[RMDB]
RNA sequence: GGGAACGACUCGAGUAGAGUCGAAAAAAUGGCACUGCAGAGCUGAUGGGCCAGGUACCUAUCCAAAAUGAGAUCCCAUCUUGCACACUGUGCUAAUUUGAGAUUCUCAUGCCUCCUACUUGGAGAGACCGCAUGCCCAGCUUCGGCUGGGCAUGAAGUGUUUAGAUGGUUUCGACCAUCUAAACACAAAAGAAACAACAACAACAAC
Reactivity to 2A3 in 0.01 (KOAc 150mM, MgCl2 10mM, bicine 150mM(pH8.5), 24C), signal-to-noise 3, nucleotides 027 to 156: a000a000u050g010g000c020a000c040u020g020c050a020g020a030g090c030u030g000a030u030g010g010g020c010c020a030g060g010u110a180c020c030u110a110u110c030c000a080a130a040a080u170g030a100g000a110u050c000c000c000a010u010c020u030u110g020c020a040c010a040c120u150g000u000g030c010u050a040a140u010u010u030g060a070g000a030u090u030c000u000c010a040u110g050c000c000u020c000c000u110a280c060u110u120g000g000a000g000a040g050a070c040c090g010c040a010u000g010c000c020c000a000g010c000u030u020c110g060g010c000u020g000g010g000c000a000u000g000a000a000
Reactivity to DMS in 0.01 (KOAc 150mM, MgCl2 10mM, bicine 150mM(pH8.5), 24C), signal-to-noise 1, nucleotides 027 to 156: a060a060u030g020g020c020a100c020u000g000c040a150g000a120g070c080u000g000a080u010g010g020g020c050c030a140g050g000u010a070c010c010u000a080u010c040c090a050a080a110a060u010g000a080g000a100u000c000c010c000a040u010c040u000u000g000c020a070c000a090c070u030g010u010g030c020u000a040a050u000u010u000g030a050g010a160u000u000c010u000c020a060u000g010c040c000u020c020c020u000a050c170u020u010g000g010a040g000a130g020a100c010c040g000c000a030u000g000c000c010c000a000g020c000u000u010c280g070g000c020u000g010g020g010c050a000u000g020a030a100